[RMDB]
RNA sequence: GGGAACGACUCGAGUAGAGUCGAAAACUAGAGCAAAUGCUCGGGGCGCUCCCCUGGGCUUGAAACUUGCAGUAACAGGUGUGAACAUUCUAGUAGUAGUUUGAUGAUCAUGUAUGCUACUGCAAACAGUGGAAUUACUAUUCGUAGUAAUUCCACUAAAAGAAACAACAACAACAAC
Reactivity to 2A3 in 0.01 (KOAc 150mM, MgCl2 10mM, bicine 150mM(pH8.5), 24C), signal-to-noise 9, nucleotides 027 to 126: c040u050a040g040a020g120c060a060a080a140u180g000c000u000c000g000g000g000g010c100g000c020u110c010c000c000c000u020g000g000g010c000u020u100g060a070a040a030c030u010u010g000c000a000g000u000a010a010c000a020g050g030u030g020u000g060a020a010c000a020u030u040c030u030a070g050u030a060g100u010a040g060u180u040u100g300a300u030g010a030u050c000a000u030g090u160a050u020g010c000u000a000c000u000g000c000a020a020a020c050
Reactivity to DMS in 0.01 (KOAc 150mM, MgCl2 10mM, bicine 150mM(pH8.5), 24C), signal-to-noise 8, nucleotides 027 to 126: c050u000a070g010a140g020c090a090a120a100u010g010c010u000c000g030g000g000g000c200g000c220u020c050c000c000c050u000g000g000g010c030u000u010g000a100a100a100c160u000u000g010c000a010g000u010a000a020c010a010g010g020u000g000u000g000a100a110c020a010u000u000c010u010a030g000u030a140g010u000a030g010u020u000u020g010a080u010g000a100u000c010a010u000g000u020a100u010g010c040u000a000c000u000g010c000a020a020a080c180
An RNA of 177 nucleotides, treated with 2A3 and DMS and read out base by base. Conditions: 150 mM KOAc, 10 mM MgCl2 and 150 mM bicine (pH 8.5), 24 C. Source: RMDB libraries RFM100 and RFMREP, as collected in RNAgym. 2A3 adducts were read by reverse transcription with SuperScript II with manganese.